RNA sequence: GGGAACGACUCGAGUAGAGUCGAAAAACUACGCUAUCGAGUACGCUCGAUAGCGUAGAACUUUUAAAUUCUGUUGCAGCAGAUAGCUGAUACCCAAUGUUAUCUUUUGCGGCAGAAAUUGAAAGAAUAGUGUGCUUAGGUUCGCCUAAGCACACUAAAAAGAAACAACAACAACAAC
Reactivity to 2A3 in 0.01 (KOAc 150mM, MgCl2 10mM, bicine 150mM(pH8.5), 24C), signal-to-noise 2, nucleotides 027 to 126: a000c000u000a000c010g010c000u000a010u000c020g000a000g020u020a060c250g040c100u030c000g010a010u000a000g000c000g000u000a000g000a000a000c010u000u000u000u020a010a090a090u010u010c000u000g000u000u010g010c020a010g000c010a000g000a020u000a000g060c040u080g030a200u300a290c010c060c070a010a060u150g000u000u000a010u000c000u000u000u030u000g010c000g030g000c000a010g000a010a000a000u000u010g020a000a010a010g050a090a070
Structure probing data (2A3) for a 177-nucleotide construct. The 2A3 profile rests on 1,184 reads.